The record gives the reactivity of an RNA of 177 nucleotides to 2A3 and DMS. Values are in units of 0.01, from 0 to 300, in steps of 10. It was measured as part of the RMDB library TTRDES. DMS (dimethyl sulfate) methylates the pairing face of unpaired adenines and cytosines. For 2A3, 5,823 sequencing reads were counted. The RNA was probed in 150 mM KOAc, 10 mM MgCl2 and 150 mM bicine (pH 8.5) at 24 C. DMS adducts were read by reverse transcription with MarathonRT. Values cover nucleotides 27 to 126.
RNA sequence: GGGAACGACUCGAGUAGAGUCGAAAAGAUAUGGAGCGAUCCAGAACUACUUCUAAGGUUCGGAAACGAACCGAAAGAAGCUGGAGUCGCUCCUAAGUCAAAACCAAUCAAACUUCGGUUUGAUUGGCUCAAUAUAAUUGUUCGCAAUUAUAUUGAGAAAAGAAACAACAACAACAAC
Reactivity to 2A3 in 0.01 (KOAc 150mM, MgCl2 10mM, bicine 150mM(pH8.5), 24C), signal-to-noise 2, nucleotides 027 to 126: g020a010u110a060u180g000g010a000g010c000g010a010u000c010c000a010g000a070a080c150u300a090c000u080u010c000u020a060a080g000g020u010u000c020g020g000a060a040a010c010g000a000a000c000c010g000a040a020a030g020a010a010g000c020u020g000g000a110g140u090c010g000c010u000c000c000u000a000a010g010u020c020a000a030a070a090c010c000a000a020u000c000a000a010a010c010u080u120c300g130g000u020u000u000g010a020u020u000g000g000
Reactivity to DMS in 0.01 (KOAc 150mM, MgCl2 10mM, bicine 150mM(pH8.5), 24C), signal-to-noise 4, nucleotides 027 to 126: g000a050u000a300u010g000g000a000g020c030g010a120u000c000c010a010g010a130a110c090u020a300c020u000u000c010u000a060a300g000g010u000u000c010g020g000a090a080a290c000g020a010a010c000c000g010a060a110a030g000a010a010g000c020u000g000g000a020g010u000c010g030c000u000c000c000u000a020a080g000u010c040a100a070a130a300c000c000a000a010u000c000a000a000a010c000u000u010c270g050g000u000u000u000g000a010u000u000g000g010